[RMDB]
RNA sequence: GGGAACGACUCGAGUAGAGUCGAAAAGCGCAAUGGUUCGCCAUUGCGCCAAGCGCCGAUGGUAGUGUGGGGUCUCCCCAUGCGAGAGUAGGCAACUGCCAGAGUACGGGUCUUUCGAGACCCGUAACCUCUGCAGUCUUUUCGAAGACUGCAGAGGAAAAGAAACAACAACAACAAC
Reactivity to DMS in 0.01 (KOAc 150mM, MgCl2 10mM, bicine 150mM(pH8.5), 24C), signal-to-noise 2, nucleotides 027 to 126: g000c010g020c010a000a030u000g000g010u000u010c270g010c010c000a010u000u000g010c010g040c010c040a050a060g020c300g010c000c010g010a140u090g010g010u000a140g010u000g020u010g000g010g000g000u030c160u000c040c000c000c000a020u010g000c020g000a160g000a040g020u000a130g000g020c000a140a140c070u000g020c030c020a140g000a120g010u000a010c020g000g010g020u010c000u000u000u010c140g010a040g000a010c000c000c000g010u000a000a050
Reactivity to 2A3 in 0.01 (KOAc 150mM, MgCl2 10mM, bicine 150mM(pH8.5), 24C), signal-to-noise 1, nucleotides 027 to 126: g030c030g000c020a000a000u010g010g070u080u120c210g040c070c000a000u000u000g000c030g040c010c010a030a020g050c020g000c010c010g030a060u010g020g000u020a010g010u010g000u010g030g010g060g160u130c230u300c060c000c000c000a010u010g010c020g000a050g000a010g000u020a010g000g000c000a000a000c010u020g000c000c020a040g010a000g200u020a000c010g000g000g000u010c010u040u070u130c220g070a050g000a020c000c000c000g000u000a000a000